Conditions: 150 mM KOAc, 10 mM MgCl2 and 150 mM bicine (pH 8.5), 24 C. An RNA of 177 nucleotides, treated with 2A3 and DMS and read out base by base. For DMS the reverse transcriptase was MarathonRT. In probing experiments dimethyl sulfate is read out at A N1 and C N3, which are open when not base-paired.
RNA sequence: GGGAACGACUCGAGUAGAGUCGAAAAAGGAUGGAAGCCUAGCUUGGUCACUACCAGUGUGCACAUGUGUGUAGACUAGUCAAGCAUCGUUGAUACAAGCUGCUCUUGGUCACCGGAGGGCCUUCGGUUAAUCUGUGGCCUUCGGGCCACAGAUUAAAAAAGAAACAACAACAACAAC
Reactivity to 2A3 in 0.01 (KOAc 150mM, MgCl2 10mM, bicine 150mM(pH8.5), 24C), signal-to-noise 2, nucleotides 027 to 126: a000g110g000a020u170g050g000a070a040g030c000c010u040a030g000c000u010u070g020g000u030c030a050c060u100a090c090c020a010g000u020g000u030g070c020a000c020a100u290g120u050g000u000g000u210a010g040a070c000u000a010g000u100c050a070a030g080c040a130u170c060g000u000u050g000a010u060a200c000a000a060g000c040u050g060c000u020c000u030u050g010g060u030c000a000c020c000g040g020a070g000g000g130c020c040u040u050c030g010g030
Reactivity to DMS in 0.01 (KOAc 150mM, MgCl2 10mM, bicine 150mM(pH8.5), 24C), signal-to-noise 2, nucleotides 027 to 126: a050g030g000a060u010g010g000a130a080g000c030c050u010a080g030c000u000u000g000g000u000c060a080c130u040a060c180c080a020g030u000g000u000g000c000a000c020a210u010g040u100g000u000g020u000a000g000a060c010u010a130g010u020c170a060a030g040c080a140u040c110g020u060u000g000a000u000a160c030a010a010g000c090u000g000c110u030c010u030u000g000g010u000c020a110c070c000g010g010a070g000g000g020c020c070u030u000c050g010g020

About this RNA:
It was measured as part of the RMDB library RFM100. For 2A3 the reverse transcriptase was SuperScript II with manganese. The DMS profile rests on 2,168 reads. For 2A3, 759 sequencing reads were counted.